This 177-nucleotide RNA was probed chemically with DMS and 2A3. The RNA was probed in 150 mM KOAc, 10 mM MgCl2 and 150 mM bicine (pH 8.5) at 24 C.
RNA sequence: GGGAACGACUCGAGUAGAGUCGAAAAAGAAUCUGGAUAUGAUCUGCGCUAACGACGUCUCGAUUGCUGGCCAAGGCUUUAACAGCAAUGACAAUGCCUUGACCCUAUUCUGGAAAGAAGGGCAACACAGCCUGAGUGAUUUCGAUCACUCAGGCUGAAAAGAAACAACAACAACAAC
Reactivity to DMS in 0.01 (KOAc 150mM, MgCl2 10mM, bicine 150mM(pH8.5), 24C), signal-to-noise 1, nucleotides 027 to 126: a110g020a080a020u000c020u000g010g010a080u020a010u010g030a030u010c010u000g020c090g040c020u000a070a090c210g010a110c100g000u000c040u000c150g000a170u000u010g060c080u000g000g010c000c030a010a000g010g000c020u000u000u000a060a270c050a070g000c200a100a040u000g010a130c190a070a040u000g010c000c000u010u010g000a180c020c010c140u000a070u000u000c020u010g000g040a030a100a050g000a000a110g000g010g020c070a070a070c060a160
Reactivity to 2A3 in 0.01 (KOAc 150mM, MgCl2 10mM, bicine 150mM(pH8.5), 24C), signal-to-noise 1, nucleotides 027 to 126: a050g060a020a030u030c050u060g040g070a040u000a100u200g100a070u000c010u040g000c030g070c030u030a110a000c070g110a040c060g040u000c010u030c090g070a090u000u080g010c040u030g020g020c020c000a050a060g050g000c020u110u000u170a080a020c000a030g010c000a030a070u060g060a030c050a060a020u100g040c000c030u020u000g010a160c010c000c000u050a040u140u000c030u000g050g090a140a030a000g050a020a020g000g030g000c010a050a020c060a000